[RMDB]
RNA sequence: GGGAACGACUCGAGUAGAGUCGAAAACGGAACACUCGGUUGGACCGCUGAUCUCCUGCAUCACGUUCCGCUGGUCGGCCCGCUGGUCGGCCACCCUGCUCGCCUCAUCUGUAGGGCGGUUCGUGCGCCCGUUAUAUGUCUUCGGACAUAUAACGGGAAAAGAAACAACAACAACAAC
Reactivity to DMS in 0.01 (KOAc 150mM, MgCl2 10mM, bicine 150mM(pH8.5), 24C), signal-to-noise 9, nucleotides 027 to 126: c040g020g010a040a140c050a080c060u010c130g020g010u010u000g010g000a210c040c010g010c070u010g000a090u000c080u000c030c030u000g000c140a090u010c040a070c050g010u000u000c010c010g020c150u010g020g020u000c010g020g000c010c010c300g020c190u010g030g040u000c010g010g000c000c000a030c130c020c020u000g010c070u000c070g010c060c050u000c100a080u000c120u010g020u010a050g010g000g010c020g000g000u000u000c030g010u000g010c290g000
Reactivity to 2A3 in 0.01 (KOAc 150mM, MgCl2 10mM, bicine 150mM(pH8.5), 24C), signal-to-noise 9, nucleotides 027 to 126: c020g010g020a030a010c030a010c050u180c160g230g020u120u050g050g020a020c010c010g010c080u050g060a120u030c040u030c060c030u060g050c030a100u120c020a020c020g010u020u010c000c000g010c030u020g000g000u010c010g010g000c010c020c060g240c270u250g010g000u010c000g000g000c000c000a000c000c000c000u030g030c030u050c050g070c020c030u130c050a260u130c070u140g080u130a020g000g010g010c010g010g000u010u030c020g010u040g040c050g040